The record gives the reactivity of an RNA of 177 nucleotides to 2A3. Conditions: 150 mM KOAc, 10 mM MgCl2 and 150 mM bicine (pH 8.5), 24 C. Source: RMDB library OK1LIB, as collected in RNAgym. As a SHAPE reagent, 2A3 marks flexible, mostly unpaired nucleotides at the ribose 2'-OH.
RNA sequence: GGGAACGACUCGAGUAGAGUCGAAAACUUUUUGAUUCCAGCUUUUUCUGCAUACUCCUUUAUCAUCAUCUGGACAUAUCUUGGAGUUAGCUUUCUGCCGUUCUUGUAGAAGAAUAGAUAUUCAGACCGUAGCGAGCGGAUUCGUCCGCUCGCUACGAAAAGAAACAACAACAACAAC
Reactivity to 2A3 in 0.01 (KOAc 150mM, MgCl2 10mM, bicine 150mM(pH8.5), 24C), signal-to-noise 1, nucleotides 027 to 126: c060u300u060u000u120u140g200a080u090u000c000c000a000g000c030u090u170u020u000u000c000u080g040c070a000u000a130c000u070c000c000u090u030u050a170u100c010a000u010c000a080u000c000u040g060g000a000c040a090u120a030u030c010u070u080g020g010a000g070u090u030a130g000c010u000u030u020c000u020g000c020c020g010u020u040c040u010u010g010u110a000g020a170a000g000a100a100u060a030g110a040u110a040u100u000c030a000g040a000c010